Structure probing data (2A3 and DMS) for a 207-nucleotide construct.
The reactions ran in a buffer of 150 mM KOAc, 10 mM MgCl2 and 150 mM bicine (pH 8.5), at 24 C.
The 2A3 profile rests on 532 reads.

RNA sequence: GGGAACGACUCGAGUAGAGUCGAAAAGUUCGCAUGGUGCACUAGUGUGUUAUUAGUAACUAAGUAAGCUUACAAUCGAAAAUGUUUAACCAUAAAAGGGUAAAAUGGUGUAAGACAGUCUGAUACUUUACGGCUUCACGUUUCGACGUGAAGCCAAUCAUACGUCCGUCUUCGGACGGACGUAUGAAAAAGAAACAACAACAACAAC
Reactivity to 2A3 in 0.01 (KOAc 150mM, MgCl2 10mM, bicine 150mM(pH8.5), 24C), signal-to-noise 1, nucleotides 027 to 156: g030u060u070c040g000c080a040u040g090g000u050g010c040a020c080u030a070g030u030g010u020g020u050u040a020u050u010a120g110u060a120a000c020u010a040a050g100u010a020a080g010c040u080u120a020c060a240a120u060c040g120a100a150a000a000u050g050u090u080u070a020a010c000c000a040u070a110a140a010a030g100g010g000u080a000a110a010a000u080g020g000u020g050u040a000a050g010a030c030a010g000u010c040u070g060a070u110a160c010u050u040u120a000c080g000g000c000u000u000c000a000c000g010u060u070u110c210g080a070c000g000u010g000a000a000g040c020c000a000a000
Reactivity to DMS in 0.01 (KOAc 150mM, MgCl2 10mM, bicine 150mM(pH8.5), 24C), signal-to-noise 1, nucleotides 027 to 156: g010u000u010c020g030c050a190u000g000g040u000g000c080a020c010u000a020g040u000g070u030g000u000u000a070u000u000a030g010u010a110a140c040u000a050a090g030u000a070a120g000c030u000u000a060c010a150a080u020c050g010a060a070a070a130u000g010u000u000u010a090a050c010c010a090u000a000a150a160a180g000g000g000u000a030a010a020a030u000g010g020u000g000u020a060a050g000a110c030a040g030u000c060u010g030a110u000a060c030u000u010u010a090c110g010g030c010u000u010c010a000c000g010u000u000u000c210g020a070c000g050u000g000a010a000g000c000c010a000a010